Chemical mapping of a 177-nucleotide RNA with DMS and 2A3. The reactions ran in a buffer of 150 mM KOAc, 10 mM MgCl2 and 150 mM bicine (pH 8.5), at 24 C.
RNA sequence: GGGAACGACUCGAGUAGAGUCGAAAAGGCGCCGAGCAACGCGCCUGGGCUGCGGAGACGGCGGGCCGCAUUGUGGCCCCCGAUGGUAACCGUCCCGCCGUCUGCCUUCUCGAUUCAGGCUCUACCCGCGCAUAGUGGAGUUCGCUCCACUAUGCGCAAAAGAAACAACAACAACAAC
Reactivity to DMS in 0.01 (KOAc 150mM, MgCl2 10mM, bicine 150mM(pH8.5), 24C), signal-to-noise 1, nucleotides 027 to 126: g010g010c030g020c000c040g010a100g000c090a150a100c110g000c020g020c020c010u000g000g000g030c000u000g000c090g000g010a010g000a010c000g000g030c050g060g000g000c070c000g030c110a060u000u010g000u030g040g000c000c000c010c160c050g000a000u000g020g010u000a050a130c300c020g000u000c000c000c000g020c000c000g000u000c000u000g000c000c000u000u000c010u010c000g000a120u000u030c020a050g000g000c030u000c010u000a190c010c000c030
Reactivity to 2A3 in 0.01 (KOAc 150mM, MgCl2 10mM, bicine 150mM(pH8.5), 24C), signal-to-noise 3, nucleotides 027 to 126: g030g000c000g040c000c050g040a060g050c060a070a100c040g020c020g020c000c000u000g000g020g020c020u040g050c030g040g040a100g010a080c000g000g000c000g000g000g000c000c000g070c110a150u070u200g070u090g070g010c000c030c020c000c040g110a090u090g040g030u080a110a060c060c000g020u010c000c000c000g000c010c000g000u010c000u030g020c000c000u090u060c040u040c000g090a090u160u030c040a020g080g000c000u010c010u000a100c020c020c020